This 177-nucleotide RNA was probed chemically with 2A3 and DMS. The 2A3 profile rests on 9,002 reads. High 2A3 reactivity points to a flexible backbone, as in loops and unpaired stretches. Reactivities are given for positions 27 through 126. Conditions: 150 mM KOAc, 10 mM MgCl2 and 150 mM bicine (pH 8.5), 24 C. It was measured as part of the RMDB library OK1LIB. DMS adducts were read by reverse transcription with MarathonRT.

[RMDB]
RNA sequence: GGGAACGACUCGAGUAGAGUCGAAAAACGAGCCAAUGCAGCGCACGGAUUAAUGCCGGACAUUCUGGUGCUCGGCGGCCUGACGCUGUGGCGUGGGGCUCGUCUACAGGGCAUUGAUCGAUGUGGCCGUAGGCGGGAUAUUCGUAUCCCGCCUACGAAAAGAAACAACAACAACAAC
Reactivity to 2A3 in 0.01 (KOAc 150mM, MgCl2 10mM, bicine 150mM(pH8.5), 24C), signal-to-noise 9, nucleotides 027 to 126: a010c060g000a010g040c020c030a090a080u230g020c030a040g000c040g010c030a030c110g020g000a010u080u120a140a040u210g010c010c000g040g020a020c020a020u190u130c130u300g170g000u050g030c050u010c030g000g000c000g000g020c000c000u050g040a080c000g000c030u080g060u150g150g010c070g010u090g000g040g010g000c040u050c100g000u000c000u040a050c030a040g000g060g000c020a030u020u080g050a060u130c070g050a060u080g020u030g060g030c000
Reactivity to DMS in 0.01 (KOAc 150mM, MgCl2 10mM, bicine 150mM(pH8.5), 24C), signal-to-noise 5, nucleotides 027 to 126: a060c040g000a030g010c020c020a100a110u020g000c020a060g010c010g000c090a070c130g000g000a110u010u020a060a050u020g010c000c000g000g020a060c050a030u020u050c160u040g030g000u000g000c040u000c010g020g010c000g000g020c010c000u020g000a170c000g020c000u010g030u020g010g010c090g030u010g010g020g000g000c010u000c010g010u000c030u010a090c180a060g020g000g000c030a060u010u020g000a070u010c060g000a090u000g010u010g010g000c080